Structure probing data (DMS and 2A3) for a 177-nucleotide construct.
RNA sequence: GGGAACGACUCGAGUAGAGUCGAAAAUCAGGACUGUUCGCAGUCCUGAAAACCCAGACCCGAAUCCACCCAUCGACUCUAGGACGGAACCCAGCCAGGCAAAAAGGAGGGUGUUCGCACCCUCCAAGCUCUAAUUGAUGUUCGCAUCAAUUAGAGCAAAAGAAACAACAACAACAAC
Reactivity to DMS in 0.01 (KOAc 150mM, MgCl2 10mM, bicine 150mM(pH8.5), 24C), signal-to-noise 3, nucleotides 027 to 126: u000c000a010g000g000a020c000u000g010u000u030c170g020c010a010g010u000c000c000u000g000a000a010a100a140c010c010c000a160g000a110c040c010c020g000a100a080u000c060c020a070c010c040c020a060u000c020g010a000c010u000c030u000a070g000g000a190c090g000g010a100a110c030c010c010a110g020c050c070a040g020g020c100a040a040a080a140a040g010g000a020g010g010g030u000g020u000u010c150g020c000a010c000c000c000u010c000c000a010a020
Reactivity to 2A3 in 0.01 (KOAc 150mM, MgCl2 10mM, bicine 150mM(pH8.5), 24C), signal-to-noise 1, nucleotides 027 to 126: u000c000a000g000g010a000c010u010g010u030u070c210g010c130a010g020u000c000c000u000g010a000a010a000a000c020c000c000a020g110a070c000c030c000g050a030a060u020c010c020a040c000c030c010a030u040c000g040a010c010u000c020u070a030g080g020a040c020g010g040a040a040c010c000c000a000g070c020c000a030g050g050c030a050a090a040a000a060g030g000a010g000g000g020u010g010u020u040c160g010c100a000c000c000c000u000c010c010a000a000
DMS adducts were read by reverse transcription with MarathonRT.